Structure probing data (DMS) for a 177-nucleotide construct. Conditions: 150 mM KOAc, 10 mM MgCl2 and 150 mM bicine (pH 8.5), 24 C. The DMS profile rests on 1,818 reads. Reactivities are given for positions 27 through 126. DMS adducts were read by reverse transcription with MarathonRT.
RNA sequence: GGGAACGACUCGAGUAGAGUCGAAAAGAUAUGGAUGGUUAUUGGAGCUCUGUGUCGGAAACGACAUUGAGCUAUGAAGAUACCAUCCUAAGUCAAAUCUGGUAAUUCCUUCGGGAAUUACCAGAAACAAGUCAAAUAGCUUCGGCUAUUUGACUUGAAAAGAAACAACAACAACAAC
Reactivity to DMS in 0.01 (KOAc 150mM, MgCl2 10mM, bicine 150mM(pH8.5), 24C), signal-to-noise 1, nucleotides 027 to 126: g000a000u000a030u010g000g000a010u000g000g000u000u010a040u000u000g030g010a070g030c000u000c000u020g010u000g000u000c010g030g010a020a000a050c010g030a000c030a010u010u000g000a010g020c000u030a110u010g000a190a300g020a020u010a010c020c020a010u000c000c000u000a000a060g010u000c010a120a160a180u010c000u000g000g000u000a000a010u010u000c010c000u000u010c210g010g010g000a000a000u000u010a000c000c000a010g000a030a080a180